[RMDB]
RNA sequence: GGGAACGACUCGAGUAGAGUCGAAAACGUACGUGGAGACACGUACGACGAGACUUCGGUCUCGAAUUGCAAGAACUUGGGCCUUGCGCGCGCGAGGCGUCGCUGCUCGGCGAGCGCAGGGACGCAAAAACUCGCGCGUAAAUAAAUAGCUUAAGAACUCCUUUUAGUCGUUCGCGACUAAAAGGAGAAAAGAAACAACAACAACAAC
Reactivity to 2A3 in 0.01 (KOAc 150mM, MgCl2 10mM, bicine 150mM(pH8.5), 24C), signal-to-noise 1, nucleotides 027 to 156: c000g010u020a000c010g000u000g000g000a020g000a010c000a000c000g020u000a000c000g000a000c000g000a000g000a000c030u100u150c300g090g010u000c010u000c000g030a050a070u150u190g030c030a020a000g050a180a120c020u030u030g050g030g000c000c000u000u000g000c000g000c020g000c000g000c000g010a020g000g090c000g040u020c060g020c060u000g000c000u000c030g120g060c270g120a080g000c030g010c000a020g000g010g000a000c000g000c000a080a120a120a100a100c010u000c000g000c000g000c000g000u000a000a000a000u050a000a050a050u140a020g000c000u010u020a010a000g000a040a040